[RMDB]
Conditions: 150 mM KOAc, 10 mM MgCl2 and 150 mM bicine (pH 8.5), 24 C. This 207-nucleotide RNA was probed chemically with 2A3 and DMS. DMS (dimethyl sulfate) methylates the pairing face of unpaired adenines and cytosines. For 2A3, 2,174 sequencing reads were counted. The data come from the RNA Mapping Database (RMDB), library OK3TST.

RNA sequence: GGGAACGACUCGAGUAGAGUCGAAAAAAGGGUUUUAUAGUUUACAGAGCACUGUCCGAUAGGAUCUUCUGUGAUCCUGCCACUAUGCUGAGAAAGAGAUAAGGUGCACACGUGUGCUUGUGUGUAUAUGUAUUGUGUUUGUGUGUGUGAGCACCUAAAUGACGCAGUAUUUCGAUACUGCGUCAUUAAAAGAAACAACAACAACAAC
Reactivity to 2A3 in 0.01 (KOAc 150mM, MgCl2 10mM, bicine 150mM(pH8.5), 24C), signal-to-noise 4, nucleotides 027 to 156: a000a000g080g000g000u080u080u070u090a110u080a040g030u020u050u070a020c060a030g010a020g040c030a020c060u050g060u100c080c060g070a090u100a100g000g010a000u030c020u200u090c130u200g180u130g030a020u020c000c000u010g030c020c000a030c040u070a010u120g020c040u020g040a050g090a130a060a010g050a020g000a020u060a190a050g070g000u000g010c010a000c000a000c060g020u040g030u060g090c010u110u050g050u000g010u010g080u020a030u010a030u180g060u010a080u060u150g030u010g030u060u070u060g040u000g010u000g000u000g020u020g020a020g010c010a050c020c000u060a100
Reactivity to DMS in 0.01 (KOAc 150mM, MgCl2 10mM, bicine 150mM(pH8.5), 24C), signal-to-noise 3, nucleotides 027 to 156: a050a060g020g030g010u010u000u010u000a050u000a100g010u000u000u000a130c050a130g000a080g010c020a030c050u010g060u020c070c030g000a180u000a030g010g000a010u000c010u000u010c210u000g020u020g000a020u010c010c000u020g040c020c000a100c040u000a040u000g000c020u010g020a150g010a090a060a080g000a110g010a140u010a050a070g010g030u000g010c010a070c040a050c020g020u000g010u010g010c080u000u000g020u010g020u010g010u000a050u000a100u010g010u010a080u000u000g040u010g010u010u000u000g010u010g000u000g030u000g050u000g010a130g030c020a020c010c020u000a050